[RMDB]
RNA sequence: GGGAACGACUCGAGUAGAGUCGAAAAUGAAAUAAAGCGUACGAAGAACCACGUACGCAAACAGAUAAGCGGACCUACGAGCGCACAGCGCUCAGGUAUGAGCGCAAAACAUAGGAAUUGAAAAAAACGUAAAAUAACACUUCGGUGUUAUUUUACGAAAAGAAACAACAACAACAAC
Reactivity to DMS in 0.01 (KOAc 150mM, MgCl2 10mM, bicine 150mM(pH8.5), 24C), signal-to-noise 2, nucleotides 027 to 126: u000g020a140a110a070u020a060a110a110g020c020g010u000a000c000g020a050a120g000a170a090c060c090a130c030g000u000a000c010g010c000a010a080a060c240a040g000a090u030a070a140g010c050g020g010a050c030c000u000a090c080g060a120g000c000g030c010a140c160a100g020c000g020c000u000c000a040g020g000u010a010u010g020a090g000c020g020c020a040a060a060a060c100a070u010a050g030g000a150a100u010u030g010a000a000a100a030a130a030a110
Reactivity to 2A3 in 0.01 (KOAc 150mM, MgCl2 10mM, bicine 150mM(pH8.5), 24C), signal-to-noise 2, nucleotides 027 to 126: u060g050a020a020a090u250a100a110a020g010c000g010u000a010c010g020a240a110g030a170a030c030c030a040c020g010u000a000c010g000c000a000a020a020c010a010g090a070u120a130a000g000c030g000g020a050c010c010u020a040c100g050a030g080c020g000c020a070c060a210g040c000g030c000u020c020a000g020g000u150a140u140g030a050g030c000g000c040a000a050a000a000c060a020u070a000g080g010a140a200u170u240g150a170a060a000a000a020a000a000
The data come from the RNA Mapping Database (RMDB), library M2PK90.
An RNA of 177 nucleotides, treated with DMS and 2A3 and read out base by base.
For 2A3 the reverse transcriptase was SuperScript II with manganese.
The DMS profile rests on 974 reads.